RNA sequence: GGGAACGACUCGAGUAGAGUCGAAAAUUCAGAGUGCAGCCAGGCCACAUUUUUACCGCCAAGACUCACCUGCGGCGGAAAUUCCCCCUUACGGAUGAGUUCGUAGAUGGUCGAGCGUGACAGGCCGCGGAUGUACACCGUUCGCGGUGUACAUCCGAAAAGAAACAACAACAACAAC
Reactivity to DMS in 0.01 (KOAc 150mM, MgCl2 10mM, bicine 150mM(pH8.5), 24C), signal-to-noise 1, nucleotides 027 to 126: u000u040c020a130g000a150g020u000g060c040a090g000c060c040a120g030g000c030c040a070c080a070u010u000u000u000u000a150c050c020g000c030c040a130a200g010a110c050u010c060a040c050c030u000g030c300g020g000c130g000g010a040a030a110u000u000c000c000c030c100c040u000u000a110c080g000g000a110u000g010a080g010u000u010c030g000u020a090g020a080u010g010g030u000c070g060a120g010c050g040u000g000a100c050a120g000g000c000c040g000
Conditions: 150 mM KOAc, 10 mM MgCl2 and 150 mM bicine (pH 8.5), 24 C. An RNA of 177 nucleotides, treated with DMS and read out base by base. For DMS the reverse transcriptase was MarathonRT. The DMS profile rests on 840 reads.